[RMDB]
RNA sequence: GGGAACGACUCGAGUAGAGUCGAAAAACGAUAUAGGAGUCUACGGACUCCUAUAUCGAAGUUUAAUGAUGAUAAAAGCCAAAAACGUGACCAUAUUCUGGACGUAUACAAUGAUAGGCCUGAUUAAGAAGGACAAAAGGUUCGCCUUUUGUCCUUCAAAAGAAACAACAACAACAAC
Reactivity to DMS in 0.01 (KOAc 150mM, MgCl2 10mM, bicine 150mM(pH8.5), 24C), signal-to-noise 3, nucleotides 027 to 126: a070c010g000a000u000a020u000a000g000g010a010g000u000c000u000a170c200g050g010a040c000u000c000c000u030a000u000a000u000c000g010a040a040g000u020u000u020a070a100u020g030a080u030g000a070u020a040a050a230a120g000c030c010a080a100a120a100a010c040g010u010g020a110c040c010a030u040a230u030u010c140u000g020g000a060c000g020u000a050u030a050c160a050a120u010g000a130u000a040g000g010c000c070u010g010a160u020u020a070a140
Reactivity to 2A3 in 0.01 (KOAc 150mM, MgCl2 10mM, bicine 150mM(pH8.5), 24C), signal-to-noise 2, nucleotides 027 to 126: a000c000g000a010u030a000u000a080g010g000a000g020u000c010u040a060c300g000g000a000c000u000c000c000u000a000u000a000u000c000g000a000a000g000u000u000u040a200a170u090g170a020u000g000a010u030a210a070a010a000g070c010c000a000a070a220a000a000c050g070u120g160a110c040c040a060u100a250u280u100c070u140g030g010a050c000g030u080a030u020a010c150a040a110u050g080a030u080a030g000g000c000c000u030g010a030u030u070a170a080